[RMDB]
RNA sequence: GGGAACGACUCGAGUAGAGUCGAAAAACACUAAGUUCGGUAUUGAUAUGGUGCUCCUGGGGGAGCUUGGGACCACCAGGUCGUGUAAUGAGGGGUGAACCGGCCCAGGUUGGCGACGGAGCAGGUCAAAUCCCCCGUGCUGAUCAGUAGUGGGAUCCUCUCAUAUACCCUUCGGGGUAUAUGAGAGAAAAGAAACAACAACAACAAC
Reactivity to 2A3 in 0.01 (KOAc 150mM, MgCl2 10mM, bicine 150mM(pH8.5), 24C), signal-to-noise 1, nucleotides 027 to 156: a000c010a000c010u040a050a040g000u000u000c030g000g000u110a060u100u150g040a070u050a050u180g020g000u020g010c050u060c030c020u080g010g020g030g020g000a080g170c000u030u030g050g000g000a020c010c010a010c020c010a050g070g060u050c120g000u030g030u100a150a200u160g040a110g000g000g000g020u020g050a040a060c000c000g030g080c000c000c000a040g100g070u080u130g090g030c000g000a010c020g030g010a170g020c020a020g000g000u060c000a010a010a190u020c000c000c000c020c000g010u020g000c010u020g000a020u030c000a010g140u100a020g010u040g030g000g000a000u070c000